An RNA of 177 nucleotides, treated with DMS and 2A3 and read out base by base. It was measured as part of the RMDB library OK2TST.
[RMDB]
RNA sequence: GGGAACGACUCGAGUAGAGUCGAAAAUCUGUUUCUAUGAAUUUGACUAUUCUAGGUACCUCAUGUAAGUAGAAGCAUAUAGUAUUUGUCUUUUGUGACUGGUUUAUUUCACUUAGUUAGCAUAAUGAGCUAGUUGAUAGUUCGCUAUCAACUAGCUAAAAGAAACAACAACAACAAC
Reactivity to DMS in 0.01 (KOAc 150mM, MgCl2 10mM, bicine 150mM(pH8.5), 24C), signal-to-noise 3, nucleotides 027 to 126: u010c090u000g010u000u000u000c010u000a070u000g000a180a060u000u000u000g020a100c040u010a090u000u010c090u000a040g000g020u000a100c150c110u000c030a040u010g010u000a020a190g010u000a060g010a020a060g000c020a040u010a140u010a080g000u010a130u000u010u000g010u010c010u010u000u000u000g000u000g020a070c090u010g000g000u000u000u000a090u030u010u010c130a070c060u000u000a040g010u010u010a040g010c040a040u010a050a080u000g010
Reactivity to 2A3 in 0.01 (KOAc 150mM, MgCl2 10mM, bicine 150mM(pH8.5), 24C), signal-to-noise 2, nucleotides 027 to 126: u020c010u070g020u020u020u000c010u000a080u100g060a100a130u070u050u070g090a130c050u030a020u070u000c030u030a040g060g000u040a030c000c000u040c030a030u110g060u120a050a080g000u030a040g040a060a020g010c000a030u090a010u050a140g080u030a110u050u070u090g070u070c000u020u070u040u120g060u020g030a030c060u040g040g010u100u030u140a120u050u190u040c040a000c000u000u000a060g040u060u040a010g020c030a020u080a210a110u280g040
DMS (dimethyl sulfate) methylates the pairing face of unpaired adenines and cytosines. For 2A3 the reverse transcriptase was SuperScript II with manganese. The 2A3 profile rests on 1,185 reads. The RNA was probed in 150 mM KOAc, 10 mM MgCl2 and 150 mM bicine (pH 8.5) at 24 C. The DMS profile rests on 2,247 reads.